Chemical mapping of a 177-nucleotide RNA with DMS and 2A3. Reactivities are given for positions 27 through 126. The DMS profile rests on 1,104 reads. The reactions ran in a buffer of 150 mM KOAc, 10 mM MgCl2 and 150 mM bicine (pH 8.5), at 24 C. The 2A3 profile rests on 1,565 reads.
RNA sequence: GGGAACGACUCGAGUAGAGUCGAAAAUGUUUGCCCUUCGGGGCAAACAAUAGAAGCGUCACGAGCAAACGGCAAGCUCGGAAAAGGACGCUAUUGCCGAAAAUACCCUAUGUUUCGACAUAGGGAAUAUUACGACCAUGUUCGCAUGGUCGUAAUAAAAAGAAACAACAACAACAAC
Reactivity to DMS in 0.01 (KOAc 150mM, MgCl2 10mM, bicine 150mM(pH8.5), 24C), signal-to-noise 2, nucleotides 027 to 126: u000g000u010u000u000g000c000c020c000u010u020c160g040g010g000g010c010a000a000a000c000a010a060u010a090g020a170a090g050c000g020u010c000a220c010g000a040g010c010a020a100a050c050g000g040c050a170a220g020c010u000c000g010g000a050a080a120a190g010g040a000c010g000c000u010a010u010u000g010c010c020g000a160a120a090a110u000a160c010c000c010u010a010u010g000u000u020u020c120g020a050c000a000u000a020g010g000g000a040a040
Reactivity to 2A3 in 0.01 (KOAc 150mM, MgCl2 10mM, bicine 150mM(pH8.5), 24C), signal-to-noise 2, nucleotides 027 to 126: u030g020u000u000u000g030c030c000c000u000u010c220g050g010g000g030c000a000a000a000c000a000a020u180a080g130a110a020g000c020g000u010c010a020c220g020a000g000c030a160a200a060c010g040g000c030a030a000g010c010u020c030g010g030a170a190a020a040g250g010a000c000g010c000u040a130u060u250g020c000c000g040a020a050a000a090u200a080c000c010c010u000a000u010g020u000u050u080c140g060a000c000a000u000a000g000g000g000a010a010